[RMDB]
RNA sequence: GGGAACGACUCGAGUAGAGUCGAAAACAUAGCGUUUCACAAUGUGCGCCAUUAACAUUGUUUAUGCAAGCACGUUUCGCAAUCUACGGCGCAGAAACAUUGCCAACACAAAUACGCUUCACGAUGUAAAACAUCGGUGCGUUCGCGCACCGAUGAAGUUCCACGUGUUGUUCGCAACACGUGGAACAAAAGAAACAACAACAACAAC
Reactivity to 2A3 in 0.01 (KOAc 150mM, MgCl2 10mM, bicine 150mM(pH8.5), 24C), signal-to-noise 2, nucleotides 027 to 156: c050a070u170a010g050c010g020u000u070u090c050a010c020a040a010u020g010u000g050c000g000c000c000a050u130u210a100a000c020a070u050u030g000u050u130u150a130u160g050c070a030a070g100c000a010c270g010u020u190u040c080g020c050a030a110u000c030u080a060c180g030g000c060g000c010a000g120a030a140a020c030a050u010u030g020c000c110a070a000c030a060c000a110a200a000u260a040c030g070c010u110u190c150a050c130g070a100u200g060u300a020a030a080a010c000a010u000c000g000g000u000g000c020g000u010u000c080g100c000g000c030a000c000c010g000a000u000g000a000a000